[RMDB]
RNA sequence: GGGAACGACUCGAGUAGAGUCGAAAAGUCAGUCAACUAGCCCUGCGCUCCCGAGCUAGUGACUGACAGAAAAGAGCUGCUCGGUCAGAACAAAUCUGACCUAGGGAGCGCAGGAGAGCAGCUCAAACCCUACCUGAUACUUCGGUAUCAGGUAGGGAAAAGAAACAACAACAACAAC
Reactivity to DMS in 0.01 (KOAc 150mM, MgCl2 10mM, bicine 150mM(pH8.5), 24C), signal-to-noise 2, nucleotides 027 to 126: g000u000c010a000g000u000c000a030a060c080u000a030g000c030c030c030u030g000c010g020c000u000c000c000c050g030a130g040c010u000a040g040u000g000a050c000u000g000a000c000a020g000a090a050a110a150g000a000g040c010u000g000c000u010c030g010g000u000c010a010g010a040a190c280a010a290a070u000c010u000g000a000c010c020u020a050g000g000g000a030g020c000g020c010a040g000g030a130g000a020g000c010a000g000c000u000c030a040a040a090
Reactivity to 2A3 in 0.01 (KOAc 150mM, MgCl2 10mM, bicine 150mM(pH8.5), 24C), signal-to-noise 2, nucleotides 027 to 126: g000u000c000a000g000u010c010a080a130c130u010a040g030c010c010c060u080g020c010g000c000u030c010c020c050g050a030g000c020u020a000g010u010g010a010c000u010g000a000c010a000g060a000a110a010a040g030a000g010c010u010g010c000u020c060g000g010u000c000a000g000a110a040c140a040a080a080u040c010u010g000a010c020c000u000a020g000g000g020a000g000c000g000c010a000g040g080a070g000a000g000c000a000g000c000u000c000a010a000a030